Background: The record gives the reactivity of an RNA of 177 nucleotides to DMS and 2A3. Source: RMDB library OK2TST, as collected in RNAgym. For 2A3 the reverse transcriptase was SuperScript II with manganese. DMS (dimethyl sulfate) methylates the pairing face of unpaired adenines and cytosines. DMS adducts were read by reverse transcription with MarathonRT. The RNA was probed in 150 mM KOAc, 10 mM MgCl2 and 150 mM bicine (pH 8.5) at 24 C. The 2A3 profile rests on 3,115 reads.
RNA sequence: GGGAACGACUCGAGUAGAGUCGAAAAAUGUCGUCACCUGUCGAGCAAAUGGAGAAUGUGGAGUACGGAAAGCCAGAUCCGAACCGACGGACGAUAAAGCUUUUCGAGGAGUACGAUGCUCUGUACAGGGACGAUUAAAUUUCGAUUUAAUCGUCCCAAAAGAAACAACAACAACAAC
Reactivity to DMS in 0.01 (KOAc 150mM, MgCl2 10mM, bicine 150mM(pH8.5), 24C), signal-to-noise 3, nucleotides 027 to 126: a160u010g000u010c000g000u000c030a090c050c010u010g010u000c040g020a040g040c040a010a120a150u000g010g010a190g000a100a110u000g020u000g010g000a110g020u000a140c010g020g010a010a010a030g000c000c070a140g000a220u000c010c000g030a110a120c260c290g040a130c020g050g000a050c020g010a090u010a070a090a130g000c020u000u000u000u000c020g010a140g000g000a070g030u000a050c060g010a260u000g000c010u000c010u000g010u020a000c090a080
Reactivity to 2A3 in 0.01 (KOAc 150mM, MgCl2 10mM, bicine 150mM(pH8.5), 24C), signal-to-noise 3, nucleotides 027 to 126: a000u050g010u000c010g020u020c020a120c250c010u040g010u000c010g010a000g000c020a040a050a160u190g100g030a140g050a190a120u150g050u090g110g070a090g040u040a030c020g000g020a010a000a000g000c000c010a040g040a160u000c000c000g010a030a050c030c010g140a080c000g060g000a000c010g000a010u150a070a080a000g000c010u060u030u000u000c020g020a070g070g010a070g050u030a020c020g010a030u040g010c010u000c040u090g020u040a010c000a020